[RMDB]
RNA sequence: GGGAACGACUCGAGUAGAGUCGAAAAGAUGAGCGGCUGCGCCAGGGCUAUGAAACAUUUGACGGAUUCAUACUCAGCGAGCGAGAGCGCGCCCAGAGUGAGAGCAAUGCUGCUGGCAGUGUUGCCAAUUCCAGGGUAGCUUCGGCUACCCUGGAAUAAAAGAAACAACAACAACAAC
Reactivity to DMS in 0.01 (KOAc 150mM, MgCl2 10mM, bicine 150mM(pH8.5), 24C), signal-to-noise 1, nucleotides 027 to 126: g040a190u010g000a110g030c080g000g040c010u000g030c060g020c030c060a150g000g000g010c300u020a040u000g000a020a020a140c050a180u000u010u010g010a070c150g010g010a220u010u000c000a040u000a020c010u000c000a200g000c050g000a050g000c040g010a130g000a100g010c010g000c050g010c050c010c000a060g000a090g030u000g010a150g030a070g010c020a060a020u000g000c020u000g020c050u010g020g010c020a080g010u010g030u000u000g000c000c020a060